[RMDB]
The record gives the reactivity of an RNA of 170 nucleotides to DMS and 2A3. For DMS the reverse transcriptase was MarathonRT. Source: RMDB library 15KLIB, as collected in RNAgym. Values cover nucleotides 27 to 129. The DMS profile rests on 33,485 reads. 2A3 adducts were read by reverse transcription with SuperScript II with manganese. The reactions ran in a buffer of 150 mM KOAc, 10 mM MgCl2 and 150 mM bicine (pH 8.5), at 24 C.
RNA sequence: GGGAACGACUCGAGUAGAGUCGAAAAAAGUAGCCUUUGGCGGUGAUCAAGUACAUGAGGUUGCUGCUGUAAGAAGUGUUACUGUCGAGUACAACAUUCAUGCUGUAUUAGACACACUACUUGCUUCACACUAUGACCUUCGGGUCAUAGAAAAGAAACAACAACAACAAC
Reactivity to DMS in 0.01 (KOAc 150mM, MgCl2 10mM, bicine 150mM(pH8.5), 24C), signal-to-noise 7, nucleotides 027 to 129: a080a020g040u040a060g010c030c030u010u010u020g050g010c000g000g000u050g010a070u060c080a030a080g040u060a100c160a110u090g040a180g040g020u000u000g030c020u000g000c040u000g020u030a020a020g000a120a030g000u030g040u000u020a090c270u030g000u000c000g030a030g030u050a040c000a030a000c010a080u070u090c260a070u060g020c020u000g010u020a010u040u020a190g000a000c000a070c090a080c020u040a000c090u020u030g020c060u000u020c060a090c140a160
Reactivity to 2A3 in 0.01 (KOAc 150mM, MgCl2 10mM, bicine 150mM(pH8.5), 24C), signal-to-noise 9, nucleotides 027 to 129: a000a000g080u040a010g050c000c000u070u020u100g040g010c030g030g020u040g020a030u070c070a120a090g110u120a180c100a160u200g110a050g030g000u010u010g000c010u000g000c010u040g020u070a020a020g040a030a000g030u020g040u160u130a100c070u060g000u000c010g010a020g000u000a000c000a010a000c010a070u090u300c070a060u230g000c000u000g010u000a000u010u040a010g000a000c000a000c000a010c020u060a040c010u020u060g030c000u080u090c040a050c000a010
About this RNA: The 2A3 profile rests on 24,364 reads.